[RMDB]
RNA sequence: GGGAACGACUCGAGUAGAGUCGAAAAGGGGUCGAUGGCACCUCUUGGAUUUAGUUCGCUUUUGACGAGCUGAAGCCUCCACGGCUCGAUAAGCGAACUUGUCAGAGGCACGCCAUCGACGGAGGCACCCAAACAAAAGCUAUUCGUAGCUUUUGAACCUAGAGAUAACCUUCGGGUUAUCUCUAGGAAAAGAAACAACAACAACAAC
Reactivity to DMS in 0.01 (KOAc 150mM, MgCl2 10mM, bicine 150mM(pH8.5), 24C), signal-to-noise 2, nucleotides 027 to 156: g010g000g030g010u000c000g010a050u000g020g090c010a090c000c010u000c000u010u010g020g030a050u000u000u000a000g030u000u000c000g060c000u020u000u010u000g060a270c110g040a050g030c000u010g020a040a100g010c060c000u010c030c080a300c050g010g030c010u000c000g000a150u010a010a050g020c010g000a020a000c000u000u000g020u010c040a050g010a070g000g040c000a070c110g040c000c010a020u000c020g020a000c000g030g000a100g020g040c050a180c030c010c020a110a110a230c040a010a020a050a030g040c010u010a050u000u000c300g060u000a020g030c000u000u020u000u000g000a190a290
Reactivity to 2A3 in 0.01 (KOAc 150mM, MgCl2 10mM, bicine 150mM(pH8.5), 24C), signal-to-noise 3, nucleotides 027 to 156: g050g000g030g000u000c010g000a000u000g000g010c000a040c060c000u010c050u070u120g090g010a030u260u200u120a010g010u000u010c010g000c010u080u030u050u190g250a170c040g000a000g000c000u020g040a160a040g070c030c050u050c060c020a060c020g000g000c000u000c010g050a080u010a080a000g000c000g010a000a000c000u000u010g010u010c000a000g000a000g000g000c110a040c220g000c000c000a000u000c010g000a000c000g000g020a020g020g030c060a090c010c010c000a020a100a030c000a000a010a010a000g010c000u010a010u050u200c290g130u050a040g010c000u040u030u020u040g030a040a040